An RNA of 207 nucleotides, treated with 2A3 and DMS and read out base by base. Conditions: 150 mM KOAc, 10 mM MgCl2 and 150 mM bicine (pH 8.5), 24 C. The 2A3 profile rests on 1,182 reads. It was measured as part of the RMDB library OK3TST.

RNA sequence: GGGAACGACUCGAGUAGAGUCGAAAAGGGCGAUACCGGGCCCGAUACCGGAAUUAGUAGUUUUCUACGAGAGGCCCAAUCUGCGGCCGAAUGCAGUGUAGGUCGAAUCGAGGACCGAGACUCGAUAAUUACGUCGAUAGAUGGACGAUUGCAUCAAAAAUCAUAGUACCUUCGGGUACUAUGAUUUAAAAGAAACAACAACAACAAC
Reactivity to 2A3 in 0.01 (KOAc 150mM, MgCl2 10mM, bicine 150mM(pH8.5), 24C), signal-to-noise 2, nucleotides 027 to 156: g000g000g000c000g000a040u020a110c010c020g000g020g000c000c050c070g040a000u000a010c000c000g000g080a110a100u130u060a050g000u010a000g070u050u090u110u210c010u020a030c020g020a040g010a070g120g020c030c000c010a030a080u070c080u130g020c070g070g000c080c040g050a030a010u040g030c000a000g030u000g040u110a030g020g030u030c020g040a030a010u010c020g000a020g010g030a030c040c100g060a020g050a030c000u000c000g000a010u050a120a050u080u130a040c050g020u020c030g040a060u040a150g080a030u050g050g020a020c050g040a060u020u160g050c040a040u010c040a130a150
Reactivity to DMS in 0.01 (KOAc 150mM, MgCl2 10mM, bicine 150mM(pH8.5), 24C), signal-to-noise 2, nucleotides 027 to 156: g040g000g000c000g010a130u010a070c040c010g010g010g000c010c010c060g000a070u000a080c020c040g010g020a080a050u000u010a110g010u000a030g000u000u000u000u000c000u000a060c040g000a150g010a200g030g020c000c010c000a150a230u000c060u000g010c020g030g020c010c170g000a060a120u000g000c030a070g020u010g030u000a120g020g040u000c030g010a140a090u000c010g000a150g000g010a170c100c060g000a170g010a120c010u010c000g030a040u000a060a090u010u010a100c060g030u000c040g010a170u010a080g010a160u000g000g000a050c050g000a110u000u000g020c010a190u000c060a060a110